[RMDB]
RNA sequence: GGGAACGACUCGAGUAGAGUCGAAAAUGCCGAUCUGGACGCAGCAGGCGUCAGCACCACGGAUGAGGCAAUCCGCGAAAAAAUGUUCGCCUUCAUGGAAGAGGCGAUCCGUCAGGUGAAGCAGGAACUGCUCACCUAUGUUCGCAUAGGUGAGCAGAAAAGAAACAACAACAACAAC
Reactivity to DMS in 0.01 (KOAc 150mM, MgCl2 10mM, bicine 150mM(pH8.5), 24C), signal-to-noise 6, nucleotides 027 to 126: u010g010c010c010g000a130u010c040u000g010g010a040c030g030c050a250g010c150a110g030g010c020g020u000c020a110g000c060a070c040c050a220c020g000g000a030u000g010a150g020g000c110a080a040u000c020c020g010c070g010a000a040a080a050a080a090u010g000u000u000c000g010c000c010u000u010c090a170u010g010g010a140a180g000a040g010g000c000g000a020u000c040c070g010u000c120a090g010g010u000g000a100a080g020c060a050g000g010a080a190
Reactivity to 2A3 in 0.01 (KOAc 150mM, MgCl2 10mM, bicine 150mM(pH8.5), 24C), signal-to-noise 3, nucleotides 027 to 126: u040g030c020c000g020a100u010c030u050g110g010a010c020g020c040a090g070c030a050g240g070c030g010u000c030a000g030c040a030c020c000a030c020g020g000a030u040g050a090g050g020c010a010a040u060c020c010g070c040g130a090a060a020a000a010a040u210g040u030u030c010g000c000c010u040u110c060a140u200g130g000a100a040g000a060g030g010c000g010a000u000c010c020g060u060c040a030g000g030u020g050a010a010g020c040a050g050g070a060a060